Notes: An RNA of 207 nucleotides, treated with 2A3 and read out base by base. It was measured as part of the RMDB library OK3TST.

RNA sequence: GGGAACGACUCGAGUAGAGUCGAAAAUCGCAGCCUUUUUCGCAUCACGCCGGACUGUUUUGCGCUGACACUCACCAUUUUAGUUCACCAACCACAACGGCACUGGCGGCAAGUCCAUCUACGGCAACAAGUUCGCCGACGAGAACUUCAAGCUCCGCACCAUAUUGGGCUUCGGCCCAAUAUGGUGAAAAGAAACAACAACAACAAC
Reactivity to 2A3 in 0.01 (KOAc 150mM, MgCl2 10mM, bicine 150mM(pH8.5), 24C), signal-to-noise 1, nucleotides 027 to 156: u080c040g000c000a000g010c020c050u070u130u060u130u080c020g030c020a040u080c030a020c080g000c030c010g090g060a120c110u040g030u040u090u070u060g070c110g000c030u030g040a070c010a010c070u050c040a040c020c010a120u030u010u010u170a030g000u010u030c010a000c070c030a030a010c000c060a010c070a110a060c090g040g000c080a020c090u050g000g000c000g030g020c050a050a020g050u010c000c050a030u020c100u070a010c030g060g000c010a040a020c020a070a100g040u070u120c050g030c040c000g080a040c040g010a020g010a050a000c040u090u100c060a020a000g000c000u060c060c000g000